Structure probing data (DMS and 2A3) for a 177-nucleotide construct.
RNA sequence: GGGAACGACUCGAGUAGAGUCGAAAAGAUAUGGACAUUGCAUCAACAACAGCGUUACUCGGAAACGAGUAACGACAUGUUGGUGCACGGUGUCCUAAGUCAAACCAACCUACUUCGGUAGGUUGGAGACUGCAGUAACGUUCGCGUUACUGCAGUCAAAAGAAACAACAACAACAAC
Reactivity to DMS in 0.01 (KOAc 150mM, MgCl2 10mM, bicine 150mM(pH8.5), 24C), signal-to-noise 3, nucleotides 027 to 126: g000a030u020a300u000g010g000a010c000a030u000u000g000c000a020u000c020a000a010c010a090a170c300a250g000c010g010u000u000a000c020u000c000g000g000a100a100a200c000g030a040g000u000a000a000c000g000a020c100a130u000g030u000u000g030g020u000g000c000a020c300g010g000u010g040u000c000c000u000a050a160g000u020c000a180a260a190c000c000a000a000c000c010u000a000c020u000u020c260g050g000u000a000g000g000u010u000g000g020a020
Reactivity to 2A3 in 0.01 (KOAc 150mM, MgCl2 10mM, bicine 150mM(pH8.5), 24C), signal-to-noise 2, nucleotides 027 to 126: g050a030u100a070u140g000g010a000c010a000u000u150g000c010a000u010c010a010a030c010a050a050c060a080g090c000g000u010u000a000c000u000c000g040g030a050a060a040c000g000a010g010u010a000a000c000g000a010c000a000u090g000u000u010g030g000u000g000c000a000c020g040g020u030g000u000c000c000u020a220a000g070u040c040a090a020a120c000c010a000a000c010c000u010a000c000u050u080c260g150g000u000a010g000g000u000u000g000g010a060

Overview:
As a SHAPE reagent, 2A3 marks flexible, mostly unpaired nucleotides at the ribose 2'-OH. Conditions: 150 mM KOAc, 10 mM MgCl2 and 150 mM bicine (pH 8.5), 24 C. The data come from the RNA Mapping Database (RMDB), library TTRDES. The 2A3 profile rests on 7,345 reads. For DMS the reverse transcriptase was MarathonRT.